[RMDB]
RNA sequence: GGGAACGACUCGAGUAGAGUCGAAAAGCUCAUUUCGGCAAAGGGCGGCGGUCCUUAGUUCUCUUACUCUUUUCUGUAAAGAGGAGACUGUAGGAUCCGCCGCCCAAGCCCGAACUGAGCCAAGUCCGAUGCAUUAUAGGUUCGCCUAUAAUGCAUCAAAAGAAACAACAACAACAAC
Reactivity to DMS in 0.01 (KOAc 150mM, MgCl2 10mM, bicine 150mM(pH8.5), 24C), signal-to-noise 2, nucleotides 027 to 126: g010c000u010c000a020u000u000u000c000g020g000c020a090a290a220g000g010g010c010g010g010c040g000g000u000c010c000u000u000a010g010u010u000c010u010c010u000u010a300c030u000c010u000u000u010u000c290u010g000u010a040a030a000g010a050g010g020a030g000a030c030u000g000u000a010g010g000a030u000c030c000g010c020c000g000c000c000c010a000a040g010c180c010c010g010a000a000c120u000g000a010g030c000c040a060a110g000u000c020c020